This 177-nucleotide RNA was probed chemically with DMS and 2A3.
RNA sequence: GGGAACGACUCGAGUAGAGUCGAAAAUGUUUUGGUCAAAAAUUUUCCGAGCAGAUGGGGAAGAAUGAGCAAAUAUGUUUAGCUAAAUGCAUGGAUCGAAUGUUAGUACAUCUGUGUGUACAUAUACCCCGUGAUAUGGGUUCGCCCAUAUCACGGGAAAAGAAACAACAACAACAAC
Reactivity to DMS in 0.01 (KOAc 150mM, MgCl2 10mM, bicine 150mM(pH8.5), 24C), signal-to-noise 1, nucleotides 027 to 126: u030g000u000u000u000u000g080g040u060c040a010a070a020a140a070u000u000u000u000c000c000g050a280g030c300a140g000a160u000g000g020g000g020a050a000g000a070a130u030g010a070g000c000a190a110a000u020a000u000g020u000u000u000a070g000c080u040a030a150a050u000g030c020a120u000g000g000a000u000c060g010a130a020u000g000u110u000a050g090u030a050c300a000u000c000u010g000u000g000u000g020u000a000c150a080u040a070u110a030c120
Reactivity to 2A3 in 0.01 (KOAc 150mM, MgCl2 10mM, bicine 150mM(pH8.5), 24C), signal-to-noise 1, nucleotides 027 to 126: u040g020u000u030u000u000g210g000u040c030a130a060a000a000a000u080u080u020u000c000c010g000a030g010c150a040g010a120u140g000g000g000g010a000a000g030a080a120u200g000a050g100c050a120a000a060u180a060u070g060u000u080u050a060g080c030u030a250a000a000u100g010c000a000u000g030g070a060u010c000g030a040a040u250g240u300u060a060g010u010a080c020a020u000c050u040g010u000g050u040g000u060a000c020a020u080a000u010a110c050
For DMS, 928 sequencing reads were counted. Source: RMDB library OK1LIB, as collected in RNAgym. Conditions: 150 mM KOAc, 10 mM MgCl2 and 150 mM bicine (pH 8.5), 24 C. DMS (dimethyl sulfate) methylates the pairing face of unpaired adenines and cytosines.